[RMDB]
RNA sequence: GGGAACGACUCGAGUAGAGUCGAAAAGAAGAAAGCACACUAUGCCGAAAAGGUGAAUAUGUAGCGAUUGUAGUGUGGAUACUAUAUCGUAAUUAUAGUAGAAAUAAGAAUUGUGGAAAACACAUAAGGGUAAAGAUAACUUCGGUUAUCUUUACCCAAAAGAAACAACAACAACAAC
Reactivity to DMS in 0.01 (KOAc 150mM, MgCl2 10mM, bicine 150mM(pH8.5), 24C), signal-to-noise 3, nucleotides 027 to 126: g000a120a110g020a070a160a160g000c000a010c030a010c010u010a070u020g000c030c040g000a060a070a150a160g000g000u040g000a080a030u050a070u060g010u010a080g010c080g030a150u050u060g010u010a030g030u030g010u000g000g000a160u000a000c010u010a000u000a020u000c190g000u100a060a100u010u000a010u000a000g000u010a040g010a120a040a120u030a130a130g010a030a180u000u000g030u010g020g000a040a060a100a060c000a020c020a070u010a080a130
Reactivity to 2A3 in 0.01 (KOAc 150mM, MgCl2 10mM, bicine 150mM(pH8.5), 24C), signal-to-noise 4, nucleotides 027 to 126: g190a060a000g080a040a010a050g090c010a010c010a000c030u040a050u140g010c020c010g090a080a170a070a080g050g010u100g040a100a030u220a060u250g120u120a050g030c070g120a060u010u060g030u030a040g010u000g010u020g050g000a040u020a040c000u020a030u000a000u040c100g120u130a120a040u280u010a050u000a000g010u010a000g140a120a130a060u280a120a060g040a110a100u040u020g000u000g000g090a060a080a130a000c010a010c000a050u140a110a090
Conditions: 150 mM KOAc, 10 mM MgCl2 and 150 mM bicine (pH 8.5), 24 C. Structure probing data (DMS and 2A3) for a 177-nucleotide construct. In probing experiments dimethyl sulfate is read out at A N1 and C N3, which are open when not base-paired. The 2A3 profile rests on 2,724 reads. Reactivities are given for positions 27 through 126. It was measured as part of the RMDB library OK1LIB.